[RMDB]
RNA sequence: GGGAACGACUCGAGUAGAGUCGAAAACACUUCUUCUGGCACCUUCGCUCUCGCCAAGAACGCGCGCGGCCGGAAAGAACCACGAGAACGCGAGGGGCGAGCCAGAGGGCGAGGAGACACCGAGGAGCAGGCUGCACUAGUUCGCUAGUGCAGCCUGAAAAGAAACAACAACAACAAC
Reactivity to 2A3 in 0.01 (KOAc 150mM, MgCl2 10mM, bicine 150mM(pH8.5), 24C), signal-to-noise 1, nucleotides 027 to 126: c030a000c010u020u010c000u030u000c060u090g040g000c110a120c090c010u030u050c040g000c010u000c000u000c000g010c020c060a050a090g140a120a070c010g000c020g020c010g010c050g070g060c000c000g000g040a050a120a000g070a060a050c010c000a110c020g070a090g080a150a020c070g000c020g000a000g010g000g020g000c170g000a000g040c000c030a030g020a000g000g000g000c050g000a000g060g070a050g010a000c020a000c040c010g000a000g040g010a020g020